RNA sequence: GGGAACGACUCGAGUAGAGUCGAAAAUAAUUCUCCUCGUUUGUGGAACUGGCCCAGUCACUGUGGGACUGCGACAAGUAACAGGUAUGGAAGCAUUUGACGUGGUGAAUGAAGGCAUUGCCAGUGACUACAGUUCAAGCUUCGGCUUGAACUGUAGAAAAGAAACAACAACAACAAC
Reactivity to DMS in 0.01 (KOAc 150mM, MgCl2 10mM, bicine 150mM(pH8.5), 24C), signal-to-noise 2, nucleotides 027 to 126: u020a110a150u000u000c020u000c000c050u010c150g040u010u010u000g030u020g030g020a110a060c040u010g010g000c020c060c050a030g010u000c020a050c110u000g050u000g010g020g000a060c030u000g000c050g010a080c040a070a050g020u000a100a110c090a060g000g010u020a060u010g010g030a150a110g000c070a060u000u010u000g010a060c060g020u000g000g030u010g000a040a050u000g000a080a070g000g010c080a140u020u000g010c020c010a090g010u020g000a280
Reactivity to 2A3 in 0.01 (KOAc 150mM, MgCl2 10mM, bicine 150mM(pH8.5), 24C), signal-to-noise 2, nucleotides 027 to 126: u100a000a070u050u040c010u050c070c010u100c050g090u060u140u190g080u030g070g010a050a020c010u020g040g000c010c020c000a010g020u030c030a000c080u060g000u070g100g030g090a020c000u000g010c000g010a000c020a090a010g030u020a080a000c020a040g080g130u070a060u200g070g000a020a050g000c030a080u000u000u170g050a020c020g030u030g000g000u020g050a050a050u080g020a070a070g040g000c020a030u050u070g030c000c000a010g040u010g050a010
Structure probing data (DMS and 2A3) for a 177-nucleotide construct. The reactions ran in a buffer of 150 mM KOAc, 10 mM MgCl2 and 150 mM bicine (pH 8.5), at 24 C.